[RMDB]
RNA sequence: GGGAACGACUCGAGUAGAGUCGAAAAUGCGAUUCUGCGUCUGCUCGGCGCUAGCUGCUGAUGCGGUAGUCGCCGAGGUCGAACCGCCGGCUGCGCCAGUAGGCUUCGACCGUGGUGGUCGGGCGCAGCUGGUCAGUUCUUUCGAGAACUGACCAGCAAAAGAAACAACAACAACAAC
Reactivity to 2A3 in 0.01 (KOAc 150mM, MgCl2 10mM, bicine 150mM(pH8.5), 24C), signal-to-noise 4, nucleotides 027 to 126: u150g010c020g070a080u090u050c020u070g040c020g080u020c020u070g050c010u020c040g010g000c020g000c050u050a080g080c020u020g000c020u220g100a190u300g010c000g010g020u030a040g110u150c020g000c010c020g060a030g000g030u040c020g010a040a020c020c010g000c010c020g030g000c010u070g030c040g000c020c000a040g040u110a080g080g000c000u060u050c030g020a040c000c000g060u130g100g150u170g020g020u040c000g010g000g010c010g000c010a000
Reactivity to DMS in 0.01 (KOAc 150mM, MgCl2 10mM, bicine 150mM(pH8.5), 24C), signal-to-noise 5, nucleotides 027 to 126: u010g020c050g010a080u000u010c040u000g010c040g000u000c040u000g000c020u000c040g010g010c000g000c030u000a020g020c010u000g010c080u010g000a170u000g030c000g000g010u000a040g010u010c030g020c020c020g010a040g010g020u000c040g010a060a170c010c030g000c060c040g010g000c010u000g000c230g010c000c000a100g010u010a060g020g010c100u000u000c010g020a020c000c010g010u010g020g020u010g010g010u000c010g010g000g000c010g010c010a020